[RMDB]
RNA sequence: GGGAACGACUCGAGUAGAGUCGAAAAGUGGAAGCUGUGUGGUGUGCCAGCGCGGGGAUGGCACCGUGGGUGUUUGCAGUUAUCUGUCACUGUCGCCUUGGUAUGAUUCAUUGGUACAGAACUAACGACUAGAGGGGAAUUUCGAUUCCCCUCUAGUAAAAGAAACAACAACAACAAC
Reactivity to DMS in 0.01 (KOAc 150mM, MgCl2 10mM, bicine 150mM(pH8.5), 24C), signal-to-noise 4, nucleotides 027 to 126: g030u010g000g010a090a110g010c040u000g020u010g030u000g010g010u010g030u000g020c030c010a050g010c090g020c090g010g000g010g000a100u010g000g000c040a030c030c070g020u010g000g000g010u000g000u020u010u000g000c040a050g000u000u000a070u010c070u010g010u010c080a080c030u000g010u000c060g010c030c030u000u000g010g000u000a070u000g010a100u010u000c040a090u000u000g020g010u000a030c070a070g000a060a100c130u020a090a130c240g000
Reactivity to 2A3 in 0.01 (KOAc 150mM, MgCl2 10mM, bicine 150mM(pH8.5), 24C), signal-to-noise 1, nucleotides 027 to 126: g090u060g030g030a060a000g010c050u000g010u030g010u030g110g020u040g040u020g070c040c000a050g000c060g060c030g020g040g000g010a060u000g010g020c020a000c010c000g050u040g020g030g010u040g000u030u030u090g000c050a010g000u070u030a040u050c030u020g080u060c010a000c050u030g010u030c060g000c010c090u040u030g050g000u110a100u140g080a080u060u060c060a030u090u090g040g000u060a030c040a040g060a110a020c040u060a100a010c060g090